RNA sequence: GGGAACGACUCGAGUAGAGUCGAAAAUUAAAAGAUCUAAACAAAGAGAUUGAAAUUCCAUCAGCAUCAGUUUCCAAGAUUAUGAACUCUCUAUUGCAUGAUGAGCUGUUCAUCAAAAACACAAAGGGAAGAACACAUCCUGCACAGCUACAGGCUGCGGAUGCUCUAAGUUCGCUUAGAGCAUCCGAAAAGAAACAACAACAACAAC
Reactivity to 2A3 in 0.01 (KOAc 150mM, MgCl2 10mM, bicine 150mM(pH8.5), 24C), signal-to-noise 1, nucleotides 027 to 156: u050u030a020a130a160a000g060a010u060c080u120a150a120a060c010a050a040a010g090a000g000a000u010u150g000a020a040a020u180u020c050c030a030u000c020a040g110c010a060u160c030a040g010u070u030u120c040c010a020a040g030a120u150u160a000u170g040a010a070c010u050c000u010c000u040a090u040u090g050c100a040u120g050a000u040g040a050g000c140u020g000u040u000c010a080u060c000a000a070a100a070a030c030a000c060a050a200a090g020g080g000a170a130g030a060a000c020a000c010a130u040c000c010u060g030c150a060c050a030g040c000u140a090c080a170g010g100c010u050g010